[RMDB]
RNA sequence: GGGAACGACUCGAGUAGAGUCGAAAAGUUGUGUAACUUCAUUUAAAUGAAUUGAAACAAAUUUAAUACAAGUGGAUGUAGGAUAACCGUCCGUCAUUUACAUUGGUAUAAAAGUGAUCUAAAAUUCGGCAGGGACGAGUCUUCGGACUCGUCCCAACACAACUAAUUGAUUCGUCAAUUAGUUGUGAAAAGAAACAACAACAACAAC
Reactivity to 2A3 in 0.01 (KOAc 150mM, MgCl2 10mM, bicine 150mM(pH8.5), 24C), signal-to-noise 2, nucleotides 027 to 156: g020u020u030g020u010g020u050a050a070c030u060u090c060a140u140u140u260a130a170a050u090g040a040a010u070u050g060a100a050a020c030a000a170a010u090u170u150a090a050u120a020c000a000a040g010u000g030g000a000u010g000u040a080g010g000a040u040a180a100c060c050g030u020c000c010g000u010c000a000u010u010u020a030c060a080u020u070g080g020u080a020u030a080a060a030a030g050u030g040a050u040c020u100a080a040a040a130u050u020c000g060g000c070a090g030g000g020a000c010g000a010g000u000c020u040u110c170g010g000a000c000u000c000g010u000c000c000c000a000a000
Reactivity to DMS in 0.01 (KOAc 150mM, MgCl2 10mM, bicine 150mM(pH8.5), 24C), signal-to-noise 1, nucleotides 027 to 156: g000u000u020g000u000g020u000a090a130c050u000u020c030a040u000u000u000a120a090a190u000g000a000a000u000u000g010a230a170a180c110a040a060a140u020u010u000a100a100u000a100c070a020a040g050u000g000g000a040u010g000u030a300g020g020a120u000a020a150c300c210g000u000c010c040g020u030c010a030u000u010u000a070c000a100u010u000g000g040u010a050u010a050a080a030a080g020u010g010a080u000c080u000a060a040a050a150u000u000c000g020g000c100a120g030g020g110a010c000g050a030g020u000c000u000u000c230g020g000a020c000u000c000g070u000c000c000c000a000a020